The record gives the reactivity of an RNA of 177 nucleotides to 2A3 and DMS. It was measured as part of the RMDB libraries RFM100 and RFMREP.
RNA sequence: GGGAACGACUCGAGUAGAGUCGAAAAAACCUGCAGACUGGUAAGCAAACACACGUACUUCAGCUGACCCGGGCAAGGUUCUAGUAGGAAGUAUUGUGUGAUUAUUUUUUUUUCACACUCAGAACGUCUGACUUAAGUAAUUCGUUACUUAAGUCAGAAAAGAAACAACAACAACAAC
Reactivity to 2A3 in 0.01 (KOAc 150mM, MgCl2 10mM, bicine 150mM(pH8.5), 24C), signal-to-noise 9, nucleotides 027 to 126: a000a000c030c000u030g020c030a030g040a100c010u050g030g040u090a060a030g040c070a060a080a010c010a000c000a000c020g000u010a010c000u000u000c000a020g010c010u010g010a010c010c010c000g140g140g050c120a130a070g020g000u050u030c060u100a040g010u020a060g220g030a020a000g010u030a030u180u300g010u010g000u000g000a000u000u000a010u010u040u010u010u000u000u000u050u060c050a060c000a020c040u120c030a040g020a150a030c040g050u000
Reactivity to DMS in 0.01 (KOAc 150mM, MgCl2 10mM, bicine 150mM(pH8.5), 24C), signal-to-noise 3, nucleotides 027 to 126: a070a070c030c020u000g030c040a080g010a110c050u000g000g000u010a050a120g020c100a090a080a140c010a050c020a020c040g000u000a020c010u010u000c020a260g010c020u010g000a030c020c020c000g000g000g010c230a090a060g000g000u000u020c050u020a020g010u000a070g010g000a030a020g010u000a010u000u010g010u010g010u000g000a040u000u000a010u010u000u000u000u010u000u000u010u000c040a070c090a060c060u010c080a070g000a090a090c230g010u000
Overview: The RNA was probed in 150 mM KOAc, 10 mM MgCl2 and 150 mM bicine (pH 8.5) at 24 C.